[RMDB]
RNA sequence: GGGAACGACUCGAGUAGAGUCGAAAACUCAGCCCGGGUUAUACUCUGGACUUCCUGACGCUAUGCCUAUGGAAGUUCGGAAUCAGGAGGGGGAGGAAGCUGUACGGGCGCUUGGUGGAGAGGCAUCCGUCUCUGCGCCAGCAGCGUCUGCAAGCUCAUUAGCUUCAAUAUUCGUAUUGAAGCUAAUAAAAGAAACAACAACAACAAC
Reactivity to DMS in 0.01 (KOAc 150mM, MgCl2 10mM, bicine 150mM(pH8.5), 24C), signal-to-noise 2, nucleotides 027 to 156: c050u020c040a240g000c000c000c010g000g000g020u040u000a070u000a080c100u000c000u020g030g020a000c000u000u010c000c000u040g010a090c090g010c170u010a070u010g020c020c000u020a120u000g010g010a010a010g020u000u000c000g040g010a050a060u000c150a130g000g010a170g040g030g000g000g010a110g010g000a040a040g020c020u000g020u000a100c030g020g040g000c010g030c000u010u010g020g010u000g040g010a030g010a040g010g010c030a240u020c210c110g010u000c010u000c000u000g000c000g060c010c000a040g000c130a060g010c010g010u010c000u000g010c000a090a030g000c010u000c080
Reactivity to 2A3 in 0.01 (KOAc 150mM, MgCl2 10mM, bicine 150mM(pH8.5), 24C), signal-to-noise 2, nucleotides 027 to 156: c060u060c000a040g020c020c000c010g000g090g000u110u160a190u070a120c040u020c000u020g010g000a000c000u000u020c000c000u010g030a050c060g030c040u210a100u300g030c000c010u060a050u060g000g000a020a000g000u010u010c020g000g000a010a010u080c030a040g090g100a060g010g030g000g020g000a020g000g040a030a020g000c010u040g040u250a080c070g050g000g000c010g040c010u040u020g030g010u000g030g160a010g000a000g010g020c020a050u190c250c140g010u000c000u000c000u070g050c010g020c010c020a030g070c110a000g000c000g000u000c000u020g000c020a030a020g040c000u010c040